RNA sequence: GGGAACGACUCGAGUAGAGUCGAAAAGAUAUGGAAACCAGUAGGGAGUCGGUAUCGGAAACGAUAUGCGACGAAGAACUACGGUUUCCUAAGUCACGGGUGUAUCUUGGUUCGCCAAGAUACACAAGUAGGUGUAACGGUUCGCCGUUACACCUACAAAAGAAACAACAACAACAAC
Reactivity to 2A3 in 0.01 (KOAc 150mM, MgCl2 10mM, bicine 150mM(pH8.5), 24C), signal-to-noise 2, nucleotides 027 to 126: g000a000u050a000u070g000g000a010a020a000c030c120a140g000u010a020g040g070g170a180g020u000c000g000g000u010a010u010c010g020g000a050a000a010c040g000a010u020a020u210g300c010g010a000c010g000a010a020g160a020a020c010u020a000c000g020g020u000u000u000c000c000u000a020a000g000u020c020a020c200g300g090g000u010g000u000a000u010c000u000u000g010g000u040u050c130g110c100c000a000a000g010a000u000a000c000a000c000a000a000
Reactivity to DMS in 0.01 (KOAc 150mM, MgCl2 10mM, bicine 150mM(pH8.5), 24C), signal-to-noise 2, nucleotides 027 to 126: g010a020u000a120u020g010g000a020a000a000c000c000a150g050u000a020g010g000g040a300g020u010c010g000g000u020a010u000c000g000g000a040a000a080c000g000a000u010a010u010g030c010g000a010c000g020a100a160g010a100a150c020u000a010c010g000g000u000u010u010c000c000u000a010a070g010u000c010a230c300g000g000g020u000g000u000a000u000c000u000u000g000g030u010u030c300g010c010c010a030a010g000a020u020a000c000a000c020a010a050